RNA sequence: GGGAACGACUCGAGUAGAGUCGAAAACACCACAUCACGUUCACCUUUUGCUUUACAUGUAUCGCGAAAUGUAAACACUUAUUCAACCAAUUGAUGUCUUCCCGUUAACAAGGCCGAGCUUAAAUUUCAUUUAGCUAAGGUUCGCCUUAGCUAAAUGAAAAGAAACAACAACAACAAC
Reactivity to 2A3 in 0.01 (KOAc 150mM, MgCl2 10mM, bicine 150mM(pH8.5), 24C), signal-to-noise 9, nucleotides 027 to 126: c050a010c010c010a040c010a040u090c050a010c080g040u060u030c020a090c020c000u010u040u060u110g040c030u040u050u060a040c030a070u090g080u110a070u100c030g010c030g100a060a070a040u100g020u080a050a060a020c020a020c040u090u110a070u140u080c040a040a060c020c010a090a120u050u110g040a030u070g060u030c000u030u020c010c000c000g050u090u090a080a050c040a070a020g030g000c020c010g040a010g010c040u080u130a070a120a070u080u040u000
Reactivity to DMS in 0.01 (KOAc 150mM, MgCl2 10mM, bicine 150mM(pH8.5), 24C), signal-to-noise 2, nucleotides 027 to 126: c080a210c070c040a070c090a060u000c010a070c160g050u000u020c010a020c030c020u010u010u050u010g070c100u000u020u000a010c050a100u010g010u030a030u010c110g000c000g040a040a030a040u010g000u010a050a060a050c050a050c140u000u020a070u000u030c060a030a090c090c070a090a140u010u000g010a000u010g020u000c040u000u010c000c000c030g000u030u040a060a040c070a040a030g000g010c030c040g000a050g000c070u020u000a010a050a110u010u000u000
Chemical mapping of a 177-nucleotide RNA with 2A3 and DMS. Source: RMDB libraries RFM100 and RFMREP, as collected in RNAgym. Values cover nucleotides 27 to 126.